Chemical mapping of a 177-nucleotide RNA with DMS and 2A3. 2A3 adducts were read by reverse transcription with SuperScript II with manganese. The DMS profile rests on 1,630 reads. For DMS the reverse transcriptase was MarathonRT.

RNA sequence: GGGAACGACUCGAGUAGAGUCGAAAAGGGACCUGUAGGUGACGCACACGUCAUCGGCAAAUGUGGCCAACAUUAAUUUCCCGUAAAGGCUUACAUCCGGCUGCGGCAGGUCAUGGCUAUACAGGCAUCCUCAUCCUCAGUUCGCUGAGGAUGAGGAAAAAGAAACAACAACAACAAC
Reactivity to DMS in 0.01 (KOAc 150mM, MgCl2 10mM, bicine 150mM(pH8.5), 24C), signal-to-noise 2, nucleotides 027 to 126: g000g000g000a060c000c000u040g000u000a050g060g030u000g000a050c050g020c270a110c300a210c040g030u000c020a020u000c010g010g060c120a020a070a010u030g020u000g050g010c040c000a100a070c240a100u000u040a030a150u000u000u000c000c000c020g040u000a100a120a160g000g000c030u000u000a050c110a020u050c110c130g000g000c010u000g000c150g010g030c060a030g010g050u000c020a100u000g000g020c030u000a180u000a160c030a040g010g010c010a160
Reactivity to 2A3 in 0.01 (KOAc 150mM, MgCl2 10mM, bicine 150mM(pH8.5), 24C), signal-to-noise 2, nucleotides 027 to 126: g100g010g000a170c010c000u040g020u040a000g000g030u040g000a000c000g080c030a110c000a010c200g000u030c000a020u040c000g030g010c040a000a000a060u040g010u020g000g060c010c080a140a090c010a080u100u190a150a210u140u070u020c000c000c000g040u060a180a080a090g050g000c000u120u090a000c000a060u030c010c050g000g000c070u030g030c060g100g000c000a000g000g080u060c030a060u030g100g000c000u020a020u010a060c110a070g030g000c000a050